[RMDB]
RNA sequence: GGGAACGACUCGAGUAGAGUCGAAAAGAUAUGGACAUAUGUCACUCGAUAAGAACGAAGGGCGAUACGCUCGGAAACGAGCGUAUCGCUGUUGACGUUCUUUUGACGAGUGCAUAUGUCCUAAGUCCAAUAUCUAUCACUUCGGUGAUAGAUAUUGAAAAGAAACAACAACAACAAC
Reactivity to DMS in 0.01 (KOAc 150mM, MgCl2 10mM, bicine 150mM(pH8.5), 24C), signal-to-noise 8, nucleotides 027 to 126: g000a100u000a300u010g010g010a010c010a000u000a000u000g000u010c020a010c000u000c000g010a180u010a010a010g000a010a010c000g020a300a160g010g010g010c010g000a000u000a000c000g010c000u000c000g000g010a070a100a190c020g000a010g010c000g020u000a000u000c000g020c000u000g000u010u000g000a300c030g010u000u000c000u000u000u000u000g000a180c140g000a020g010u000g000c010a000u000a000u000g000u000c000c000u000a010a060g010u000c040
Reactivity to 2A3 in 0.01 (KOAc 150mM, MgCl2 10mM, bicine 150mM(pH8.5), 24C), signal-to-noise 5, nucleotides 027 to 126: g060a020u120a060u270g000g010a000c010a000u050a010u050g180u300c030a030c010u020c010g080a080u020a080a020g010a000a000c040g080a120a090g180g000g010c000g010a000u000a010c000g000c010u000c010g010g030a100a090a020c020g000a000g000c010g010u000a000u000c000g000c010u000g010u010u070g030a010c010g000u010u010c000u020u020u020u060g270a140c030g000a010g000u000g000c000a010u000a000u000g000u020c000c000u000a010a000g000u000c000